[RMDB]
RNA sequence: GGGAACGACUCGAGUAGAGUCGAAAAGGGCAUCGUACUGCCCGAUGCCGACCCCGCCCGUAUCGCAGAGGGGCUUUUCUGGGGUGCUUUCAUCAAUAGCGGGCAGACCUGCGCGGCCUUGAAGCGAGGAGUAUAAUAAUUUCGAUUAUUAUACUCCAAAAGAAACAACAACAACAAC
Reactivity to DMS in 0.01 (KOAc 150mM, MgCl2 10mM, bicine 150mM(pH8.5), 24C), signal-to-noise 4, nucleotides 027 to 126: g000g000g020c000a020u000c030g000u010a150c060u010g010c040c030c000g010a010u000g010c020c030g000a160c050c000c000c050g010c000c010c020g020u000a140u010c060g010c060a050g000a300g010g000g000g020c050u000u010u000u020c090u000g030g000g000g020u000g010c040u010u000u000c080a100u010c190a050a110u010a110g030c050g000g020g020c020a050g000a100c030c020u000g010c190g020c190g010g000c000c010u000u000g000a230a200g000c060g000a100
Reactivity to 2A3 in 0.01 (KOAc 150mM, MgCl2 10mM, bicine 150mM(pH8.5), 24C), signal-to-noise 3, nucleotides 027 to 126: g030g000g010c000a000u020c010g020u110a040c030u080g020c010c010c000g020a010u010g020c000c010g050a120c000c000c000c020g020c000c010c010g100u090a080u150c020g000c050a000g040a030g070g030g000g070c000u090u070u050u070c150u100g050g020g000g050u030g000c010u090u180u150c040a160u040c020a100a200u070a130g030c040g020g000g000c010a000g040a060c000c010u030g000c070g030c020g010g020c010c000u020u060g020a030a000g010c010g020a060